[RMDB]
RNA sequence: GGGAACGACUCGAGUAGAGUCGAAAAAGAUCCACGCUACGGCGUGGGUCACACGUUCAUCCCUAUUGGGACGGAAGUAGGCAUAGUGCCGAAGGAACGCAUUAGUCAUGCGCUACGGCGCAUGACACACAUCAGAGUCACUUCGGUGACUCUGAAAUCAAAGUAUGAUCUUCGGAUCAUACUUUGAAAAAGAAACAACAACAACAAC
Reactivity to DMS in 0.01 (KOAc 150mM, MgCl2 10mM, bicine 150mM(pH8.5), 24C), signal-to-noise 2, nucleotides 027 to 156: a130g020a010u010c010c010a020c010g030c000u000a090c230g110g030c020g050u000g010g010g030u000c020a040c100a030c030g000u010u000c020a170u010c010c000c000u010a220u010u010g020g020g030a020c020g000g010a040a050g020u000a140g000g040c010a210u010a100g010u010g020c000c000g010a150a150g010g000a060a060c060g030c060a130u010u000a110g040u000c030a040u010g040c000g020c010u000a090c270g110g000c010g000c000a010u020g000a010c020a030c080a060c090a110u010c010a020g010a060g050u000c010a010c000u000u010c270g040g020u020g000a000c030u000c000u000g000a000a020a090
Reactivity to 2A3 in 0.01 (KOAc 150mM, MgCl2 10mM, bicine 150mM(pH8.5), 24C), signal-to-noise 6, nucleotides 027 to 156: a010g000a000u010c000c010a000c000g000c000u010a030c280g140g000c000g000u000g000g000g000u000c000a000c010a010c010g010u000u010c000a020u030c020c000c000u150a300u190u300g020g000g000a010c020g010g010a020a000g000u010a010g010g010c040a100u120a260g160u220g170c010c000g010a000a000g030g000a030a000c010g010c050a050u080u130a050g000u000c000a000u010g000c000g000c010u020a040c300g080g000c000g000c010a000u000g000a000c000a000c000a000c010a080u030c010a000g000a000g000u000c000a010c010u060u110c210g090g000u000g000a000c000u010c000u000g000a010a000a000
Source: RMDB library M2RFPK, as collected in RNAgym. Structure probing data (DMS and 2A3) for a 207-nucleotide construct. DMS adducts were read by reverse transcription with MarathonRT. 2A3 adducts were read by reverse transcription with SuperScript II with manganese. In probing experiments dimethyl sulfate is read out at A N1 and C N3, which are open when not base-paired.